This 207-nucleotide RNA was probed chemically with DMS and 2A3. It was measured as part of the RMDB library M2RFPK. The 2A3 profile rests on 745 reads. DMS adducts were read by reverse transcription with MarathonRT. The RNA was probed in 150 mM KOAc, 10 mM MgCl2 and 150 mM bicine (pH 8.5) at 24 C.
[RMDB]
RNA sequence: GGGAACGACUCGAGUAGAGUCGAAAAAACGCGAAAGUCGGACGGCGGCCAUGAGUCGCAACGCAAAGCCGCGGCAAGUGGAGUUAGCGAGAAGAGACUAGGCUUUGGUUUCUUCACGUGAAGCGGUAAAAGGUUCGAGACUUCGGUCUCGAACCAACAAAUGUGGUAUCUUCGGAUACCACAUUUGAAAAGAAACAACAACAACAAC
Reactivity to DMS in 0.01 (KOAc 150mM, MgCl2 10mM, bicine 150mM(pH8.5), 24C), signal-to-noise 1, nucleotides 027 to 156: a080a020c100g070c020g010a110a080a110g040u000c020g000g000a120c100g030g020c000g030g000c000c030a150u010g000a210g010u010c000g040c010a070a020c050g000c020a080a090a220g050c040c000g060c010g000g000c060a040a110g040u000g020g020a150g020u000u010a190g020c020g020a150g040a040a050g000a060g010a010c050u000a050g030g000c100u000u010u000g020g010u000u000u000c010u000u000c000a060c020g000u010g000a050a090g010c020g040g000u000a050a050a080a050g020g010u000u000c020g010a020g000a050c020u010u010c290g050g000u000c010u000c000g010a010a000c010c030a070a020
Reactivity to 2A3 in 0.01 (KOAc 150mM, MgCl2 10mM, bicine 150mM(pH8.5), 24C), signal-to-noise 1, nucleotides 027 to 156: a000a020c100g020c040g020a180a060a020g150u150c060g130g030a060c050g150g030c000g010g020c000c000a290u210g010a060g050u010c040g050c050a060a020c020g010c050a110a010a010g010c010c010g030c010g030g000c050a080a030g040u070g090g040a080g030u060u100a010g030c000g010a040g000a030a000g010a000g030a010c020u050a060g170g120c020u110u030u090g030g000u010u000u010c000u030u000c020a000c020g010u030g020a080a000g010c000g000g010u070a050a060a000a060g020g010u010u000c000g000a020g010a040c000u010u100c280g040g000u000c000u020c000g000a000a020c000c010a000a020